[RMDB]
RNA sequence: GGGAACGACUCGAGUAGAGUCGAAAAUCUGUUUACAAAUUAUCGUUAAGUCCAUGUCUGACUACGAUUCCGUAAACAGAAGCCAGUUUGCGUCAAGUCCGACAUGGACUUUUGGCAGAACUGAUCAUAAAUACCUGAGGUUCGCCUCAGGUAUUUAAAAAGAAACAACAACAACAAC
Reactivity to 2A3 in 0.01 (KOAc 150mM, MgCl2 10mM, bicine 150mM(pH8.5), 24C), signal-to-noise 1, nucleotides 027 to 126: u000c000u020g030u040u110u110a040c030a140a190a120u260u110a130u190c040g030u050u090a070a000g000u000c000c010a050u060g020u050c050u040g010a000c010u050a070c050g070a070u180u020c050c020g030u040a000a000a000c000a020g060a060a000g110c020c010a010g000u010u000u050g030c030g030u090c040a030a030g000u000c010c020g010a070c100a070u060g000g000a000c010u040u000u000u040g000g000c000a000g010a010a020c040u020g040a080u120c060a070
Reactivity to DMS in 0.01 (KOAc 150mM, MgCl2 10mM, bicine 150mM(pH8.5), 24C), signal-to-noise 4, nucleotides 027 to 126: u000c010u000g010u000u000u000a080c080a090a090a130u020u000a050u020c100g010u010u000a040a020g000u000c000c040a050u000g020u000c070u000g010a020c000u000a100c090g010a090u010u000c230c090g010u010a000a010a020c020a030g000a080a100g010c130c100a100g000u000u000u000g010c020g000u010c050a070a040g010u000c000c060g000a050c100a040u000g010g000a000c000u000u000u000u000g000g000c040a090g010a020a070c050u000g000a100u000c130a140